[RMDB]
RNA sequence: GGGAACGACUCGAGUAGAGUCGAAAAGACCGCUGAAUGCGGAAGUACUAGAUCAACUAGAAAGUAGAUGAAUACAAAAGCUACGUCUCGAAACUAGUUGAUCUAGUGCAAUCGAGACGUAGCAAGAACUAUAUCCACGGUUCGCCGUGGAUAUAGUAAAAGAAACAACAACAACAAC
Reactivity to DMS in 0.01 (KOAc 150mM, MgCl2 10mM, bicine 150mM(pH8.5), 24C), signal-to-noise 7, nucleotides 027 to 126: g030a140c000c010g030c010u020g020a120a080u070g020c000g020g000a060a070g010u030a180c010u000a020g010a010u020c010a010a020c000u010a020g010a210a120a130g020u020a070g010a140u030g010a120a080u030a100c160a090a070a110a070g000c010u000a010c010g000u000c010u010c010g000a040a100a110c020u000a010g010u000u010g000a020u010c010u000a010g000u030g010c170a070a060u010c010g000a000g000a010c000g010u000a000g000c010a030a020g010a110
Reactivity to 2A3 in 0.01 (KOAc 150mM, MgCl2 10mM, bicine 150mM(pH8.5), 24C), signal-to-noise 9, nucleotides 027 to 126: g060a020c010c010g000c020u110g230a300a140u300g010c000g020g010a020a030g050u030a060c000u020a010g020a040u020c010a030a010c000u010a020g070a120a180a000g160u160a060g040a250u200g130a140a100u250a180c130a030a100a020a000g000c000u000a000c000g000u000c000u000c000g050a080a090a060c030u010a010g010u010u060g010a010u010c000u000a000g000u000g010c020a010a020u050c000g000a000g000a000c010g020u000a000g010c020a020a010g040a050
The data come from the RNA Mapping Database (RMDB), library OK1LIB.
The record gives the reactivity of an RNA of 177 nucleotides to DMS and 2A3.
For 2A3 the reverse transcriptase was SuperScript II with manganese.
For DMS, 20,099 sequencing reads were counted.